[RMDB]
RNA sequence: GGGAACGACUCGAGUAGAGUCGAAAAAACGGUCUUGUCGUACAAACGGAUUCGUCACCAUCGAGCGAUGCUGAGCUGAUUCAGUUGGCUUCGGAGUUCGAGGGUCAUCCCGACAACGCGGCGGCCGGUAGAAAUCUAACUUCGGUUAGAUUUCUACAAAAGAAACAACAACAACAAC
Reactivity to DMS in 0.01 (KOAc 150mM, MgCl2 10mM, bicine 150mM(pH8.5), 24C), signal-to-noise 5, nucleotides 027 to 126: a060a130c040g000g010u010c010u000u030g050u000c010g010u010a110c200a070a090a140c300g000g020a030u010u010c140g020u010c110a050c020c010a080u000c030g000a030g010c010g000a140u000g000c190u010g000a040g000c000u000g010a060u000u000c170a130g020u010u000g010g010c010u010u000c070g020g010a300g000u000u000c000g010a040g000g010g010u000c100a080u000c010c000c030g010a100c220a070a100c130g000c030g010g020c030g010g000c000c000g000
Reactivity to 2A3 in 0.01 (KOAc 150mM, MgCl2 10mM, bicine 150mM(pH8.5), 24C), signal-to-noise 4, nucleotides 027 to 126: a000a010c030g010g000u030c060u120u210g010u020c010g020u050a030c060a040a120a010c010g050g000a040u130u140c130g070u060c060a080c150c010a200u020c000g000a010g020c020g070a070u180g080c040u090g000a030g000c010u020g010a120u120u100c030a090g140u050u030g040g000c000u090u080c040g000g000a070g010u010u020c010g010a020g000g020g030u020c010a020u030c000c010c000g010a040c030a130a020c100g000c000g000g000c000g030g010c000c000g030
An RNA of 177 nucleotides, treated with DMS and 2A3 and read out base by base. For 2A3 the reverse transcriptase was SuperScript II with manganese.